[RMDB]
RNA sequence: GGGAACGACUCGAGUAGAGUCGAAAAAACGUUGCAUGAUCGUAAAACAUGCCCGGCUUACCGUGAGCCGCCUUUGAAAGCAAGGUUUACACGGACUCUGUUGCGUUACGCACGUACCUAACUUGUGAAAACGGCAUCUUGUUCGCAAGAUGCCGAACAGGAGAUACAAGUUCGCUUGUAUCUCCUGAAAAGAAACAACAACAACAAC
Reactivity to 2A3 in 0.01 (KOAc 150mM, MgCl2 10mM, bicine 150mM(pH8.5), 24C), signal-to-noise 6, nucleotides 027 to 156: a000a000c000g000u010u010g000c000a010u000g020a060u210c040g090u210a100a100a000a040c000a000u000g000c000c000c000g000g000c000u010u070a110c000c010g000u010g010a000g000c000c000g030c000c010u060u020u020g070a030a020a000g030c040a010a010g020g000u010u070u050a010c000a000c010g070g030a140c060u090c070u160g090u090u030g030c000g040u060u060a050c150g010c020a010c020g020u050a040c020c030u050a110a150c050u120u090g050u050g150a050a050a020a050c010g000g010c000a000u000c000u010u010g020u040u050c100g000c120a000a000g000a000u000g010c000c010g000a000a000
Reactivity to DMS in 0.01 (KOAc 150mM, MgCl2 10mM, bicine 150mM(pH8.5), 24C), signal-to-noise 2, nucleotides 027 to 156: a100a090c010g000u000u000g040c000a040u000g000a120u000c030g010u000a070a060a050a070c030a050u000g020c030c120c000g030g000c020u000u000a080c020c120g000u000g000a050g000c010c020g010c030c010u010u000u000g000a100a100a180g020c110a050a060g020g010u010u010u000a180c030a100c020g010g010a170c130u000c060u000g000u000u010g000c000g030u000u000a080c060g000c020a060c030g030u000a070c030c020u000a070a080c060u000u010g010u020g000a080a030a060a150c000g010g000c010a020u000c000u020u000g010u000u000c290g040c000a030a000g000a020u000g020c000c000g000a000a010